Source information:
The record gives the reactivity of an RNA of 177 nucleotides to 2A3 and DMS. The reactions ran in a buffer of 150 mM KOAc, 10 mM MgCl2 and 150 mM bicine (pH 8.5), at 24 C. For DMS the reverse transcriptase was MarathonRT. For DMS, 2,109 sequencing reads were counted.
RNA sequence: GGGAACGACUCGAGUAGAGUCGAAAACUCUCAGUCAGUCUCUCAGUCUCAGUCUCAGACUGACUGUCUCAGUGUCACUGAGAGUCUCAGUGUCUGACACUCUGUGACACACAGACAGAGUGUCUGAGAGCUGACGGUAGUUCGCUACCGUCAGCUCAAAAGAAACAACAACAACAAC
Reactivity to 2A3 in 0.01 (KOAc 150mM, MgCl2 10mM, bicine 150mM(pH8.5), 24C), signal-to-noise 1, nucleotides 027 to 126: c010u030c010u010c000a000g000u020c010a000g050u070c020u010c000u000c090a020g050u020c030u010c090a030g070u000c040u030c130a030g030a030c000u020g040a010c000u010g000u010c000u000c020a060g000u010g040u010c050a000c020u060g040a010g000a040g070u000c000u010c030a240g150u110g190u140c080u030g020a010c020a010c000u000c010u000g070u020g020a050c000a010c010a010c020a090g000a000c010a000g050a050g040u190g020u000c000u010g030a030
Reactivity to DMS in 0.01 (KOAc 150mM, MgCl2 10mM, bicine 150mM(pH8.5), 24C), signal-to-noise 2, nucleotides 027 to 126: c080u000c020u000c040a110g010u010c030a040g010u000c020u000c030u010c020a060g000u010c060u020c040a040g010u000c040u020c200a130g000a020c000u000g000a150c020u000g020u000c010u010c120a230g000u000g020u000c000a000c000u000g000a030g000a050g040u000c010u000c070a160g020u010g030u010c110u000g000a010c010a060c000u000c000u000g000u000g000a010c030a050c010a040c170a030g000a000c010a000g000a130g010u000g020u000c000u000g000a030